The record gives the reactivity of an RNA of 177 nucleotides to 2A3 and DMS. Reactivities are rounded to 0.1 and cut off at 0 and 3. Reactivities are given for positions 27 through 126.
RNA sequence: GGGAACGACUCGAGUAGAGUCGAAAAUCAUGUUUAUUCGUAAACAUGAAACGCCGCACGGCGCGCCUGGCCACCAGGGAACGUGCAUAUGGAAGCCUGAGAAUGAGGUGCCGUUCGCGGCACCUAAGAAUUUAAUACGUUUCGACGUAUUAAAUUCAAAAGAAACAACAACAACAAC
Reactivity to 2A3 in 0.01 (KOAc 150mM, MgCl2 10mM, bicine 150mM(pH8.5), 24C), signal-to-noise 3, nucleotides 027 to 126: u000c000a000u000g000u000u010u030a090u040u080c180g050u020a000a010a010c000a000u010g010a060a030a000c050g050c040c010g040c020a010c060g050g030c070g030c040g150c100c010u030g020g030c110c040a130c040c010a150g000g000g000a030a060c020g000u020g020c010a040u050a060u160g070g020a080a020g040c000c040u100g060a100g130a190a130u210g030a030g040g000u010g000c000c010g030u010u070c250g000c000g060g010c020a000c000c000u000a000a010
Reactivity to DMS in 0.01 (KOAc 150mM, MgCl2 10mM, bicine 150mM(pH8.5), 24C), signal-to-noise 4, nucleotides 027 to 126: u010c000a000u000g000u010u000u000a020u000u010c160g020u000a010a010a000c000a000u000g000a030a130a190c100g020c070c100g000c060a040c060g010g010c090g020c100g000c010c000u000g020g030c100c070a120c100c020a020g000g000g000a080a080c050g010u010g000c020a110u010a100u010g010g000a080a110g000c010c030u010g000a100g010a090a110u000g010a040g010g000u000g010c000c000g020u000u000c180g020c000g000g010c000a010c000c000u010a020a050